[RMDB]
RNA sequence: GGGAACGACUCGAGUAGAGUCGAAAACGGGCGACACGAUUGAUAUAACGAUUGCGUCGCGUGGGAUUGACGAGGAGUUCGUGAUCGCCGCGACGGAAUAUCGUUGGGGACGCGACGAGACGAUCCUCACAAUUGUCGAGAAACGCGGCGACGUUGACUACUACGCAGGGUUCGCCCUGCGUAGUAGAAAAGAAACAACAACAACAAC
Reactivity to 2A3 in 0.01 (KOAc 150mM, MgCl2 10mM, bicine 150mM(pH8.5), 24C), signal-to-noise 1, nucleotides 027 to 156: c000g000g050g060c010g030a050c010a030c110g050a070u000u160g060a040u050a070u060a300a090c050g040a040u000u080g000c010g000u030c000g000c030g070u150g000g050g000a070u030u060g040a090c110g010a020g030g000a070g160u120u050c020g030u010g090a180u050c000g020c100c000g010c000g000a030c010g070g050a010a040u220a080u190c290g010u110u000g000g000g000g000a000c010g020c050g090a160c130g020a000g000a010c050g000a200u000c010c010u000c000a000c050a020a110u040u120g220u180c040g010a050g050a100a080a000c000g030c030g000g030c000g000a010c010g000u000u000g020a070
Record summary: An RNA of 207 nucleotides, treated with 2A3 and read out base by base. Values are in units of 0.01, from 0 to 300, in steps of 10. The reactions ran in a buffer of 150 mM KOAc, 10 mM MgCl2 and 150 mM bicine (pH 8.5), at 24 C.